This 177-nucleotide RNA was probed chemically with DMS and 2A3. Source: RMDB libraries RFM100 and RFMREP, as collected in RNAgym. DMS (dimethyl sulfate) methylates the pairing face of unpaired adenines and cytosines. For DMS the reverse transcriptase was MarathonRT. 2A3 adducts were read by reverse transcription with SuperScript II with manganese. Values cover nucleotides 27 to 126. Conditions: 150 mM KOAc, 10 mM MgCl2 and 150 mM bicine (pH 8.5), 24 C.
RNA sequence: GGGAACGACUCGAGUAGAGUCGAAAAUGCGGUUUUUGUAGUGCUUGUAUUUAUGUUGGAGUGGGUGCAAUAAAUGUCCCGUCUUGAAACACGGAUCAAGGAGGCCGUUUUAUGUGCGAGUGUAAGACUAAAGUCACGGAUUCGUCCGUGACUUUAGAAAAGAAACAACAACAACAAC
Reactivity to DMS in 0.01 (KOAc 150mM, MgCl2 10mM, bicine 150mM(pH8.5), 24C), signal-to-noise 4, nucleotides 027 to 126: u030g010c110g010g000u000u000u000u000u000g010u000a060g010u010g020c030u000u010g010u020a050u000u010u020a070u060g010u010u010g000g010a160g010u010g000g000g010u010g000c040a060a080u030a020a050a090u020g000u000c020c000c000g010u020c050u000u010g000a090a040a050c130a050c100g000g010a060u020c030a050a090g010g000a100g010g010c140c030g000u000u010u010u000a060u040g000u030g010c060g000a110g030u020g010u000a040a110g010a210
Reactivity to 2A3 in 0.01 (KOAc 150mM, MgCl2 10mM, bicine 150mM(pH8.5), 24C), signal-to-noise 3, nucleotides 027 to 126: u120g000c040g060g030u010u000u010u020u100g120u030a070g010u030g050c040u010u010g020u130a130u060u110u020a150u100g050u040u050g020g000a050g010u020g020g020g060u080g000c010a060a080u070a070a080a070u100g040u010c000c010c000g020u010c010u000u050g060a010a070a000c030a010c020g030g000a020u050c030a050a010g010g010a030g050g000c000c010g030u030u010u010u030a130u100g130u030g040c020g010a040g040u050g000u060a040a030g000a030